[RMDB]
RNA sequence: GGGAACGACUCGAGUAGAGUCGAAAAAAUAUCGCCAGUCACAGAUUAUCAAGUAGAUCUCAACAGAGUGCCCUGGCAAGCAUACUCUUUUAUCAACUUGGUUUUUAGCAAGCUCCACAAAGGACAACGUUCCGAAUGUAUUCGUACAUUCGGAACGAAAAGAAACAACAACAACAAC
Reactivity to DMS in 0.01 (KOAc 150mM, MgCl2 10mM, bicine 150mM(pH8.5), 24C), signal-to-noise 1, nucleotides 027 to 126: a050a020u000a100u010c080g040c000c030a090g000u010c000a110c040a180g010a040u010u000a010u000c010a000a080g060u000a080g010a030u000c250u000c150a050a090c250a000g000a080g010u000g000c080c070c000u000g010g010c090a080a120g010c050a060u000a070c020u020c000u000u000u000u000a020u000c070a110a020c030u020u010g000g000u000u000u000u030u010a070g020c070a080a050g020c040u010c000c000a100c150a020a140a080g000g010a040c100a030a150
Source: RMDB library OK2TRN, as collected in RNAgym. An RNA of 177 nucleotides, treated with DMS and read out base by base. DMS adducts were read by reverse transcription with MarathonRT.